[RMDB]
RNA sequence: GGGAACGACUCGAGUAGAGUCGAAAAGUGGGAUCGGUGAUAUCGCACGGCGGCGACACGAUCACGGUGCCAUGUUGCUUUCUGAGCAUGGCCACCGUCGCCUGAUCCGCGGCGCGCCGGCUGAGCAGUAUCGUCCAGAGUUCGCUCUGGACGAUACAAAAGAAACAACAACAACAAC
Reactivity to 2A3 in 0.01 (KOAc 150mM, MgCl2 10mM, bicine 150mM(pH8.5), 24C), signal-to-noise 2, nucleotides 027 to 126: g080u080g040g110g030a090u050c030g020g010u030g060a090u040a060u240c060g030c010a010c060g000g020c000g010g030c010g010a010c020a030c100g080a050u080c040a020c070g000g020u000g020c020c010a020u000g050u030u050g170c090u110u220u130c200u240g030a010g000c010a000u010g000g030c070c020a000c000c000g030u010c020g000c000c000u040g040a090u030c030c020g030c070g040g000c040g000c000g000c000c000g050g010c030u040g030a020g040c030a010
Reactivity to DMS in 0.01 (KOAc 150mM, MgCl2 10mM, bicine 150mM(pH8.5), 24C), signal-to-noise 3, nucleotides 027 to 126: g020u010g010g030g010a020u000c010g010g010u010g010a130u000a060u010c060g000c020a160c020g010g030c030g000g010c010g010a060c080a140c160g010a060u000c060a090c050g010g000u000g000c000c010a030u010g020u010u010g000c060u000u000u020c240u000g000a030g010c000a000u000g000g010c100c040a010c020c010g010u010c090g020c040c030u000g010a080u000c100c140g020c030g000g010c040g010c090g010c030c020g010g000c050u000g000a070g030c090a160